RNA sequence: GGGAACGACUCGAGUAGAGUCGAAAAGGGUGAUGUCUCCUAACCUGUAUCAAUGGGGGCACUCGGUCGUGCUGUGGGUAGAAAUUUUAUUUCGUGCCUACCUUAGACGCUUGUCGUCGGGAGUAUGUGGGACUGAUGAACUUCGGUUCAUCAGUAAUCCCGUUAAAUAGUUCGCUAUUUAACGGGAAAAAGAAACAACAACAACAAC
Reactivity to 2A3 in 0.01 (KOAc 150mM, MgCl2 10mM, bicine 150mM(pH8.5), 24C), signal-to-noise 5, nucleotides 027 to 156: g040g020g000u030g020a090u050g030u010c010u000c030c000u050a100a110c020c030u120g040u140a170u100c080a090a090u170g010g000g000g000g000c000a030c020u030c020g050g000u010c030g050u020g040c060u050g000u000g000g000g000u030a030g070a010a040a030u160u240u170u180a140u040u130u040c050g040u130g010c000c000u010a030c010c000u030u060a070g000a030c010g020c060u160u210g110u270c010g000u000c010g000g040g010a060g030u080a090u170g070u100g040g020g020a010c000u000g000a010u000g010a000a010c000u040u040c060g070g000u000u000c000a000u000c000a000g000u000a000a030
Reactivity to DMS in 0.01 (KOAc 150mM, MgCl2 10mM, bicine 150mM(pH8.5), 24C), signal-to-noise 3, nucleotides 027 to 156: g030g000g020u000g010a070u010g020u000c010u000c030c010u000a100a150c090c050u000g010u000a120u010c100a070a120u010g010g030g000g030g030c030a050c040u010c040g030g010u000c070g020u000g010c040u000g030u000g020g010g030u000a300g000a030a030a060u000u000u000u010a080u010u030u000c020g000u000g030c010c000u000a020c020c070u000u010a140g010a080c020g010c050u000u000g030u000c020g030u010c000g000g020g000a140g010u000a060u010g000u000g000g000g010a080c000u020g000a020u000g000a010a010c000u000u010c300g040g010u000u000c000a010u010c010a010g010u000a040a300